Conditions: 150 mM KOAc, 10 mM MgCl2 and 150 mM bicine (pH 8.5), 24 C.
The record gives the reactivity of an RNA of 177 nucleotides to 2A3 and DMS.
For 2A3, 3,270 sequencing reads were counted.
Source: RMDB library TTRDES, as collected in RNAgym.
For DMS, 1,229 sequencing reads were counted.
2A3 adducts were read by reverse transcription with SuperScript II with manganese.
[RMDB]
RNA sequence: GGGAACGACUCGAGUAGAGUCGAAAAGAUAUGGAUCAGAGGGACAUGCUCGUCAUCGGAAACGAUGACCGUGAGCAACAGCCCUACCUGAUCCUAAGUCAAACUGGACCUCUUCGGAGGUCCAGAACCCAUCGCAUAAGUUCGCUUAUGCGAUGGGAAAAGAAACAACAACAACAAC
Reactivity to 2A3 in 0.01 (KOAc 150mM, MgCl2 10mM, bicine 150mM(pH8.5), 24C), signal-to-noise 2, nucleotides 027 to 126: g000a020u040a010u040g000g020a000u010c000a020g010a000g130g000g040a070c230a260u300g000c010u010c010g010u000c000a000u010c010g000g000a010a010a000c000g000a000u000g010a000c020c090g300u180g040a020g000c030a050a080c050a100g050c000c000c010u120a250c030c000u030g000a010u000c010c000u000a010a010g010u020c040a030a060a160c000u000g000g010a010c000c010u010c030u150u120c300g180g050a000g000g030u000c000c010a000g000a000a000
Reactivity to DMS in 0.01 (KOAc 150mM, MgCl2 10mM, bicine 150mM(pH8.5), 24C), signal-to-noise 2, nucleotides 027 to 126: g000a020u000a170u000g030g010a000u000c000a000g030a080g000g000g010a060c040a160u040g030c000u020c020g000u000c010a010u000c000g040g000a060a010a080c020g010a010u000g000a000c080c300g010u010g010a000g050c030a220a020c190a090g000c000c010c000u000a090c300c040u000g020a000u000c000c000u000a000a090g060u000c010a080a090a260c000u000g000g000a020c010c000u000c000u010u000c250g020g000a010g000g010u020c000c000a000g000a030a100